[RMDB]
RNA sequence: GGGAACGACUCGAGUAGAGUCGAAAACAAUUGGUCUUAAGCCUAAAGAGAGGGAGAUGAAAGACAAAGGCCGUUUUUACUCACUCAUGACAUGGGAAUUAAGGGAAUACUUUGUCAUAACUGAAUAUCGAGCUUACUCUUUCGAGAGUAAGCUCGAAAAAGAAACAACAACAACAAC
Reactivity to DMS in 0.01 (KOAc 150mM, MgCl2 10mM, bicine 150mM(pH8.5), 24C), signal-to-noise 2, nucleotides 027 to 126: c130a090a020u010u000g000g000u000c040u000u040a190a090g080c020c000u000a100a160a170g040a060g000a130g000g000g000a110g050a060u060g000a060a130a100g000a040c020a030a020a010g020g000c000c010g000u000u040u000u000u110a000c030u000c040a150c270u000c150a180u030g000a060c180a160u060g000g000g000a130a100u000u000a000a080g000g000g000a060a020u070a130c010u000u050u000g000u000c020a070u000a130a040c080u020g030a060a130u060a140
Reactivity to 2A3 in 0.01 (KOAc 150mM, MgCl2 10mM, bicine 150mM(pH8.5), 24C), signal-to-noise 3, nucleotides 027 to 126: c050a010a190u060u070g030g000u060c030u050u170a210a090g000c020c000u180a120a130a000g150a000g050a050g000g100g020a070g010a030u090g140a130a130a020g080a000c020a070a040a000g010g060c010c000g020u000u000u020u010u020a100c010u020c060a070c020u100c060a080u120g030a070c000a000u020g010g010g120a150a130u110u080a220a170g140g000g030a040a010u040a150c020u010u000u000g010u020c020a020u120a220a040c020u040g120a120a010u100a030